The record gives the reactivity of an RNA of 177 nucleotides to 2A3.
Values cover nucleotides 27 to 126.
The reactions ran in a buffer of 150 mM KOAc, 10 mM MgCl2 and 150 mM bicine (pH 8.5), at 24 C.
For 2A3, 284 sequencing reads were counted.
[RMDB]
RNA sequence: GGGAACGACUCGAGUAGAGUCGAAAAUUGGGCGAUGCGCGAGUUGGUCGUGCUACACGAAGUGGCGCAUCAUUUGUGCCAGGUGCCACCGCCACACGGACCCGAGUUUGUGGCGACGGUGUGCACCGCGCAGCGGGAGGUUCGCCUCCCGCUGCGCAAAAGAAACAACAACAACAAC
Reactivity to 2A3 in 0.01 (KOAc 150mM, MgCl2 10mM, bicine 150mM(pH8.5), 24C), signal-to-noise 1, nucleotides 027 to 126: u100u000g090g020g030c120g030a050u150g000c050g000c030g000a080g160u120u020g050g000u000c000g000u010g150c170u190a160c060a010c010g180a170a190g000u000g130g000c000g000c000a020u060c030a080u160u080u170g070u050g000c000c000a090g000g000u010g020c020c000a000c000c000g000c000c020a010c000a000c000g030g210a230c060c130c030g090a300g110u040u100u000g000u000g000g170c010g090a090c150g060g100u010g000u050g000c010a000c000c070